[RMDB]
RNA sequence: GGGAACGACUCGAGUAGAGUCGAAAAUGACGGUUCGCCGUCAACGACGCGUACUACAGGUGGCUCUGUGAGAGCAACAGCACAGCUCCCAAAUAGGAGCUGUGACAUGCUCCCAGAGGGAAACACCUGUAUCGCCACAGAGGCGGUUCGCCGCCAAAUCAGAUAUGACUUUCGAGUCAUAUCUGAUAAAAGAAACAACAACAACAAC
Reactivity to 2A3 in 0.01 (KOAc 150mM, MgCl2 10mM, bicine 150mM(pH8.5), 24C), signal-to-noise 5, nucleotides 027 to 156: u120g010a010c020g030g020u060u090c240g050c070c000g040u020c010a020a030c070g150a030c120g020c010g020u100a100c060u010a000c040a010g000g020u010g060g100c000u000c010u030g180u110g050a190g000a000g270c000a040a090c060a080g000c000a000c000a000g000c020u060c000c030c070a210a260a080u300a110g000g000a000g000c010u000g000u000g000a000c000a020u040g000c010u000c000c000c000a000g000a010g020g020g050a050a160a000c000a000c000c000u000g000u000a010u020c000g000c000c000a050c030a070g120a080g020g000c000g010g040u050u070c250g020c040c000g000c000c000a100a080
Reactivity to DMS in 0.01 (KOAc 150mM, MgCl2 10mM, bicine 150mM(pH8.5), 24C), signal-to-noise 2, nucleotides 027 to 156: u020g030a020c010g000g000u000u010c250g000c030c040g000u000c080a160a190c060g010a090c040g000c130g040u000a090c110u000a020c010a030g020g040u000g020g000c000u010c000u000g080u010g000a050g000a040g020c020a040a000c070a150g000c020a030c030a040g020c000u000c000c000c010a030a160a160u000a060g010g000a000g020c000u000g000u020g010a070c040a300u000g020c000u000c010c000c000a030g000a090g020g000g000a080a050a100c030a040c000c000u000g010u000a000u000c000g030c010c020a170c090a120g000a260g000g000c010g030g030u000u000c090g040c020c010g000c010c000a010a110